Chemical mapping of a 177-nucleotide RNA with 2A3 and DMS. Values cover nucleotides 27 to 126. The RNA was probed in 150 mM KOAc, 10 mM MgCl2 and 150 mM bicine (pH 8.5) at 24 C. For DMS the reverse transcriptase was MarathonRT.
RNA sequence: GGGAACGACUCGAGUAGAGUCGAAAAUGGAGAGACUGAUCGUAAUGCCCUUGGAGCAGGGAAGAAAAUAAUUUAGAAAGGAGAUUCCGCCCCAGCUUGCGGUGCGGCCGAAAGGCUGUAAGGCAUCUGACACACACUUAUUCGUAAGUGUGUGUCAAAAAGAAACAACAACAACAAC
Reactivity to 2A3 in 0.01 (KOAc 150mM, MgCl2 10mM, bicine 150mM(pH8.5), 24C), signal-to-noise 6, nucleotides 027 to 126: u150g010g010a040g000a000g010a040c010u020g020a080u060c030g050u070a030a030u110g030c010c010c000u010u070g070g010a040g000c020a010g020g020g030a060a030g090a060a110a030a040u260a030a090u100u100u060a070g040a040a040a010g040g010a040g010a040u110u020c010c010g010c010c000c000c000a010g050c070u050u050g000c040g100g020u030g010c010g020g010c000c010g030a050a010a000g010g000c000u000g010u030a010a010g060g000c010a030u010c070
Reactivity to DMS in 0.01 (KOAc 150mM, MgCl2 10mM, bicine 150mM(pH8.5), 24C), signal-to-noise 4, nucleotides 027 to 126: u010g010g000a060g000a130g000a070c060u000g000a140u000c040g000u010a060a070u000g010c020c010c040u010u000g010g000a050g020c070a060g000g020g010a140a070g020a070a080a070a070u020a070a050u020u000u010a070g000a080a080a100g010g010a050g010a130u020u010c050c020g020c050c000c020c030a070g010c140u010u000g000c010g000g020u000g020c020g000g000c020c000g000a080a070a130g010g020c000u000g000u000a050a040g000g000c020a060u030c130